[RMDB]
RNA sequence: GGGAACGACUCGAGUAGAGUCGAAAAGGACUGCGCAGUCCGGCAACAUCAGCAAAGAGCCCGCUAUACGUGACGGAUUGGCUGAAGCGUACAGAAAUAUUGAGCCUCCUGCAAGAGGCAGCCAAGCAAAACGUACGUGAGUUCGCUCACGUACGAAGCAGAUAUGACAGUUCGCUGUCAUAUCUGCAAAAGAAACAACAACAACAAC
Reactivity to 2A3 in 0.01 (KOAc 150mM, MgCl2 10mM, bicine 150mM(pH8.5), 24C), signal-to-noise 2, nucleotides 027 to 156: g010g000a030c020u090g030c070g030c150a040g020u020c020c000g030g020c010a020a080c000a160u120c000a010g010c050a100a000a020g090a050g080c000c010c010g000c020u040a070u020a090c090g060u040g080a000c020g030g020a060u010u080g060g000c000u040g000a030a010g030c010g010u040a050c060a050g230a070a140a040u250a140u130u150g020a020g030c000c000u000c000c020u110g070c040a050a000g010a020g040g000c030a000g000c010c040a010a020g020c030a010a090a030a050c010g000u000a000c000g010u000g000a000g000u050u090c150g020c070u010c010a000c000g000u020a000c000g000a020a010